Chemical mapping of a 170-nucleotide RNA with DMS and 2A3. The data come from the RNA Mapping Database (RMDB), library 15KLIB. The RNA was probed in 150 mM KOAc, 10 mM MgCl2 and 150 mM bicine (pH 8.5) at 24 C. Values cover nucleotides 27 to 129.
[RMDB]
RNA sequence: GGGAACGACUCGAGUAGAGUCGAAAAAGGUAUUGGCGGUACACCUUGUAUAAAGGUUGCUGCUAUGCAGUCUAAACUUACAGAUCUUAAAUGCACAUCUGUGGUUCUCCUCUCUGUGCUCCAACAGUAAUACACAGCUUCGGCUGUGUAAAAAGAAACAACAACAACAAC
Reactivity to DMS in 0.01 (KOAc 150mM, MgCl2 10mM, bicine 150mM(pH8.5), 24C), signal-to-noise 7, nucleotides 027 to 129: a000g000g030u000a000u040u050g000g000c030g020g030u000a030c190a030c050c000u000u030g000u030a120u020a040a030a010g000g030u020u010g010c000u030g020c010u000a030u010g010c030a130g020u040c060u060a010a060a090c110u000u000a070c110a040g010a040u040c090u020u010a060a140a110u070g050c170a040c190a010u000c000u020g000u040g030g010u010u010c050u050c040c050u000c070u020c000u000g050u030g000c070u000c080c060a060a040c070a090g010u040a120a100
Reactivity to 2A3 in 0.01 (KOAc 150mM, MgCl2 10mM, bicine 150mM(pH8.5), 24C), signal-to-noise 9, nucleotides 027 to 129: a000g160g000u070a060u090u130g020g000c010g000g000u020a030c050a000c130c010u000u010g110u070a210u230a150a040a000g000g000u000u010g000c000u000g000c000u000a000u030g000c020a000g030u020c090u190a040a090a060c020u080u160a030c050a020g040a040u010c020u050u220a120a160a150u240g050c080a010c010a060u000c020u030g010u030g030g000u040u000c020u020c030c000u050c020u000c000u010g020u040g030c030u050c090c000a080a070c000a030g030u040a040a010